[RMDB]
RNA sequence: GGGAACGACUCGAGUAGAGUCGAAAACAGAUACCAUAUUAAUGAAGAUGUCACCCAAGUAUACGCCGGUGACGACAUGGCCAUGGACCAUGUAUGCCCUGAGAAGAAGAGCUUCAAAGCUUUGGAACCCUGGAUAGAUUUUCGAAUCUAUCCAGGGAAAAGAAACAACAACAACAAC
Reactivity to 2A3 in 0.01 (KOAc 150mM, MgCl2 10mM, bicine 150mM(pH8.5), 24C), signal-to-noise 6, nucleotides 027 to 126: c050a030g150a120u210a160c010c050a040u070a100u230u260a170a210u170g080a050a050g040a080u170g010u020c000a010c000c000c020a030a050g090u120a230u050a190c120g060c070c010g020g000u020g000a010c000g000a010c020a020u030g040g000c070c040a100u040g050g020a070c020c000a000u010g040u040a060u110g050c000c000c000u070g030a040g020a110a040g040a070a000g000a030g030c000u060u040c070a130a130a040g010c020u070u050u090g050g020a100a080
Reactivity to DMS in 0.01 (KOAc 150mM, MgCl2 10mM, bicine 150mM(pH8.5), 24C), signal-to-noise 4, nucleotides 027 to 126: c060a070g000a160u030a110c030c030a060u010a070u000u080a080a120u030g000a170a080g000a050u020g000u010c010a030c000c010c060a100a160g020u040a150u010a090c070g020c220c300g020g010u000g000a010c000g000a070c010a010u000g000g030c070c110a120u000g000g000a240c040c040a030u020g020u000a070u030g020c010c030c000u000g000a090g000a100a070g000a100a110g000a050g010c000u000u040c250a100a060a070g010c010u000u000u010g010g020a110a110

Chemical mapping of a 177-nucleotide RNA with 2A3 and DMS.
The reactions ran in a buffer of 150 mM KOAc, 10 mM MgCl2 and 150 mM bicine (pH 8.5), at 24 C.
For 2A3 the reverse transcriptase was SuperScript II with manganese.